[RMDB]
RNA sequence: GGGAACGACUCGAGUAGAGUCGAAAAAGUAUUGUUCGCAAUACUCUUAAUCCUAAGUCGCUGAGGCGAAUGACAUGCAUGCAUCGGAAACGAUGUGAAUGCAACAGCAUUCGCUACCCACCAGCGAUAUGGAAAUGGUACCGGCUUCGGCCGGUAAACAUAGGCGGACAUUCGUGUCCGCCUAUGUAAAAGAAACAACAACAACAAC
Reactivity to 2A3 in 0.01 (KOAc 150mM, MgCl2 10mM, bicine 150mM(pH8.5), 24C), signal-to-noise 2, nucleotides 027 to 156: a000g030u030a020u030u020g050u090u190c280g010c100a000a000u010a000c010u040c060u180u160a130a090u030c000c000u020a100a110g030u040c010g000c010u000g010a000g010g000c010g070a000a000u030g010a050c020a020u080g000c000a000u000g020c000a000u030c000g080g000a120a040a060c030g030a000u020g000u010g210a110a000u000g020c000a010a050c050a090g000c000a000u000u000c000g000c000u020a040c060c020c060a050c000c000a000g010c000g000a000u000a030u090g030g040a070a030a070u140g130g040u030a010c010c000g000g000c010u040u050c130g110g010c020c010g010g030u080a050a000
Reactivity to DMS in 0.01 (KOAc 150mM, MgCl2 10mM, bicine 150mM(pH8.5), 24C), signal-to-noise 1, nucleotides 027 to 156: a060g010u000a000u000u000g000u000u030c180g050c000a040a050u000a020c030u000c040u000u000a180a220u010c010c000u000a100a280g020u000c000g040c000u010g010a110g000g010c020g040a000a040u010g000a090c030a300u010g020c000a040u000g060c050a040u000c000g030g000a160a140a300c000g010a030u000g050u000g010a080a000u000g010c000a080a000c060a140g000c010a010u000u000c010g000c010u000a050c040c060c000a300c130c000a050g000c000g010a000u000a170u000g040g010a030a060a180u000g050g020u010a050c000c040g000g000c000u000u010c180g090g080c000c050g020g020u000a000a100

Chemical mapping of a 207-nucleotide RNA with 2A3 and DMS. The 2A3 profile rests on 1,154 reads. The RNA was probed in 150 mM KOAc, 10 mM MgCl2 and 150 mM bicine (pH 8.5) at 24 C. The data come from the RNA Mapping Database (RMDB), library RNAMAK. 2A3 is a SHAPE reagent: it acylates the 2'-hydroxyl of flexible nucleotides of all four kinds.